[RMDB]
RNA sequence: GGGAACGACUCGAGUAGAGUCGAAAAUGGUUAGCAGUGUCUUAUUAGCUUCAUAAGAUGUCGUUGUGGCUGGUGACAACGUGACACUGCCGUCACUACCACCACCUUUAUCGUGUCACAUUUAUGCAGCGUCACUAGGGUUCGCCCUAGUGACGCUAAAAGAAACAACAACAACAAC
Reactivity to 2A3 in 0.01 (KOAc 150mM, MgCl2 10mM, bicine 150mM(pH8.5), 24C), signal-to-noise 2, nucleotides 027 to 126: u090g010g080u130u000a000g000c000a000g000u000g000u000c130u000u120a170u300u300a250g080c000u090u090c040a090u180a290a090g000a030u230g090u140c010g080u000u000g000u070g090g000c240u010g050g100u080g000a090c080a200a070c220g030u040g000a000c000a000c000u000g060c040c000g000u090c000a010c000u230a000c000c000a000c000c000a000c000c000u190u140u160a120u300c080g080u000g010u110c070a120c120a110u070u120u060a150u080g070c080
Structure probing data (2A3) for a 177-nucleotide construct. High 2A3 reactivity points to a flexible backbone, as in loops and unpaired stretches. The RNA was probed in 150 mM KOAc, 10 mM MgCl2 and 150 mM bicine (pH 8.5) at 24 C. For 2A3, 342 sequencing reads were counted. Values cover nucleotides 27 to 126.